An RNA of 177 nucleotides, treated with DMS and 2A3 and read out base by base. 2A3 is a SHAPE reagent: it acylates the 2'-hydroxyl of flexible nucleotides of all four kinds. 2A3 adducts were read by reverse transcription with SuperScript II with manganese.
RNA sequence: GGGAACGACUCGAGUAGAGUCGAAAACGUCGUGAACUAGCGACAAUGCAGUAGCUCCAUCGUUAUCUAACCGAAACAUCGUGACUAGUCGUAGAAUAGAACCAGGAGAGGACGCUGGCAAACAAAGACCGGGUGUCUGAUUCGUCGGACGCCCGGUAAAAGAAACAACAACAACAAC
Reactivity to DMS in 0.01 (KOAc 150mM, MgCl2 10mM, bicine 150mM(pH8.5), 24C), signal-to-noise 3, nucleotides 027 to 126: c150g020u010c030g000u010g000a130a190c240u020a110g010c020g000a030c030a090a070u030g000c090a010g000u010a060g020c010u020c020c000a030u000c050g000u010u000a050u030c050u010a110a070c140c090g010a090a120a040c100a060u000c020g000u020g010a050c070u000a040g000u010c040g020u000a060g000a050a050u030a030g010a050a090c050c060a090g000g010a070g030a070g000g000a070c080g010c030u000g010g000c070a050a070a070c130a020a080a130g000
Reactivity to 2A3 in 0.01 (KOAc 150mM, MgCl2 10mM, bicine 150mM(pH8.5), 24C), signal-to-noise 4, nucleotides 027 to 126: c040g010u030c020g020u040g070a140a100c060u030a080g030c000g030a010c010a000a030u140g000c010a010g000u050a010g030c000u000c020c010a050u040c030g050u060u060a060u070c040u050a070a100c010c020g060a070a060a030c040a060u070c040g060u050g050a070c060u060a050g070u040c030g080u040a020g030a080a040u050a030g020a050a030c000c010a040g010g050a070g050a020g050g020a000c040g000c040u000g020g030c020a000a110a040c040a030a130a040g100